[RMDB]
RNA sequence: GGGAACGACUCGAGUAGAGUCGAAAACGCGCUAUCGCAUAGCGGCGCGCUAUUAUCGCUAUUAUAUACGCAUAGCGGCGUAUUAUCGCUAUUAUGCGUAUAUACGCUAUUAUCGCAUAUAUGCGUAGUUUUCAGAACUCUUCGGAGUUCUGAAAACAAAAGAAACAACAACAACAAC
Reactivity to DMS in 0.01 (KOAc 150mM, MgCl2 10mM, bicine 150mM(pH8.5), 24C), signal-to-noise 2, nucleotides 027 to 126: c060g010c020g020c010u000a210u000c060g000c030a070u000a050g010c110g020g010c110g020c020g020c040u000a040u000u020a040u010c070g020c240u000a100u000u010a010u000a020u000a010c010g000c030a010u000a000g000c110g030g000c000g040u000a110u000u000a050u000c000g010c000u000a080u020u000a010u000g000c000g000u000a000u000a000u000a010c190g000c030u010a020u010u010a040u000c050g000c020a160u000a060u000a030u000g020c000g030u000a080
Reactivity to 2A3 in 0.01 (KOAc 150mM, MgCl2 10mM, bicine 150mM(pH8.5), 24C), signal-to-noise 3, nucleotides 027 to 126: c040g040c000g010c000u060a060u200c020g030c060a040u010a010g040c040g110g020c010g020c000g020c030u060a050u130u040a060u050c020g010c040u000a060u300u040a010u190a000u000a010c010g010c000a010u000a000g010c050g060g000c010g020u030a220u160u210a080u250c000g000c000u020a060u090u010a010u120g010c000g000u000a000u000a010u000a000c000g000c010u000a020u050u000a110u300c030g000c060a010u060a010u000a000u120g010c020g020u010a070